[RMDB]
RNA sequence: GGGAACGACUCGAGUAGAGUCGAAAAUACAAUAGCGUAGCGAACCAAGCUAAGAGGUUGGAAGUCCAACGGUAGAGGGCUUGGUUCGCAGCUGCUCUAGAAGAGGUCCCACUCCCUACGCCGCAAACUAGCCUUUUAACUUCGGUUAAAAGGCUAGAAAAGAAACAACAACAACAAC
Reactivity to 2A3 in 0.01 (KOAc 150mM, MgCl2 10mM, bicine 150mM(pH8.5), 24C), signal-to-noise 1, nucleotides 027 to 126: u190a010c060a050a090u040a090g060c020g150u070a050g000c020g000a000a000c000c010a020a010g010c000u060a060a000g080a080g070g190u020u000g030g090a300a190g160u050c010c000a010a010c010g000g100u100a050g040a140g040g070g050c020u010u000g020g020u000u000c000g000c000a010g000c020u040g000c010u000c020u040a040g010a140a010g010a110g000g030u000c000c000c000a040c000u020c000c000c000u020a000c050g020c040c020g050c030a030a110a050
Reactivity to DMS in 0.01 (KOAc 150mM, MgCl2 10mM, bicine 150mM(pH8.5), 24C), signal-to-noise 2, nucleotides 027 to 126: u010a060c190a080a120u010a030g010c030g020u000a120g000c020g020a010a020c000c000a000a000g000c000u000a150a100g020a150g000g000u000u010g000g010a300a140g020u000c020c000a000a020c020g020g000u000a100g010a110g000g000g000c000u000u000g000g010u000u020c000g030c030a000g000c000u020g000c020u000c050u000a070g010a110a110g010a070g010g000u000c010c010c000a190c070u000c000c010c000u000a060c160g000c020c040g020c080a030a060a140
Background
Chemical mapping of a 177-nucleotide RNA with 2A3 and DMS. Conditions: 150 mM KOAc, 10 mM MgCl2 and 150 mM bicine (pH 8.5), 24 C. Source: RMDB library M2PK90, as collected in RNAgym. For 2A3, 1,017 sequencing reads were counted.